[RMDB]
RNA sequence: GGGAACGACUCGAGUAGAGUCGAAAAGAGCUUUGAGAGUUUUACUGGCCGUCAAAUUUGGUUCUCGACCCGCUGUCACCAAUUACGCUGCUUUUUCCUUUUUAUUAACUCCUAUACUUGUGUACGCCACAAUACCAUUGUUCGCAAUGGUAUUGUGAAAAGAAACAACAACAACAAC
Reactivity to DMS in 0.01 (KOAc 150mM, MgCl2 10mM, bicine 150mM(pH8.5), 24C), signal-to-noise 5, nucleotides 027 to 126: g010a090g000c040u000u000u000g010a120g010a110g010u000u000u000u000a090c080u000g010g010c030c020g010u000c060a040a080a120u000u000u010g010g010u000u000c040u000c050g010a130c040c010c040g020c060u000g000u000c030a050c040c030a050a090u010u010a100c120g010c030u000g010c040u010u000u000u000u000c020c010u010u000u000u000u000a090u040u000a080a100c090u000c020c030u010a100u010a060c090u000u010g020u000g010u000a070c140g000c130
Reactivity to 2A3 in 0.01 (KOAc 150mM, MgCl2 10mM, bicine 150mM(pH8.5), 24C), signal-to-noise 4, nucleotides 027 to 126: g010a010g000c030u130u160u160g090a130g010a020g050u020u080u040u100a060c020u030g060g000c030c010g050u060c030a020a040a070u100u060u110g040g000u070u030c050u000c030g090a090c020c010c020g000c020u040g040u030c010a010c030c010a020a020u080u030a030c030g000c010u020g020c000u050u030u000u060u070c000c000u040u110u040u030u040a160u090u070a080a050c020u050c010c030u090a090u070a210c040u050u030g040u030g010u120a040c050g050c040